[RMDB]
RNA sequence: GGGAACGACUCGAGUAGAGUCGAAAACGCUGGGUAAUUGGAGCAGCGAGCGUUGAAACACUGAAGCGCGCACGGUGUGGAGCCCGCUGCUGUGAUAAUUACCUGUGCUGAAGCGCGCACGGCAACCGAAAGGUGCGGGCACCGCAUUUCGAUGCGGAAAGGACCUAACAUUCGUGUUAGGUCCUUUAAAAGAAACAACAACAACAAC
Reactivity to DMS in 0.01 (KOAc 150mM, MgCl2 10mM, bicine 150mM(pH8.5), 24C), signal-to-noise 1, nucleotides 027 to 156: c060g010c030u030g010g030g050u000a020a050u000u030g030g000a060g070c000a040g000c000g030a000g000c020g000u000u010g000a300a200a060c020a090c030u000g000a060a060g020c000g050c000g040c000a300c070g030g010u000g000u000g000g020a110g030c000c020c020g000c010u000g010c010u030g000u010g010a120u010a030a060u000u010a000c020c000u010g030u000g030c020u000g000a110a110g020c050g000c010g040c000a230c020g000g040c030a140a050c020c020g010a110a110a230g000g000u000g010c050g000g000g000c060a200c000c080g000c000a030u000u010u010c160g020a040u000g010c010g000g000
Reactivity to 2A3 in 0.01 (KOAc 150mM, MgCl2 10mM, bicine 150mM(pH8.5), 24C), signal-to-noise 2, nucleotides 027 to 156: c030g000c010u030g000g000g010u010a010a030u010u110g160g050a110g010c000a000g030c020g000a010g000c040g110u180u090g040a020a150a010c020a010c030u070g080a270a050g000c000g000c010g000c020a040c030g020g000u000g030u040g010g040a020g020c030c060c030g000c000u020g000c010u030g050u040g040a130u110a060a050u010u000a000c000c000u000g020u030g020c000u060g020a070a040g000c000g000c000g000c000a010c000g050g000c020a030a040c020c030g020a090a020a010g040g010u020g020c030g020g080g030c060a030c030c000g000c020a010u070u190u140c210g070a040u010g000c000g000g000
Conditions: 150 mM KOAc, 10 mM MgCl2 and 150 mM bicine (pH 8.5), 24 C. An RNA of 207 nucleotides, treated with DMS and 2A3 and read out base by base. For 2A3 the reverse transcriptase was SuperScript II with manganese. For 2A3, 1,425 sequencing reads were counted. The DMS profile rests on 3,070 reads.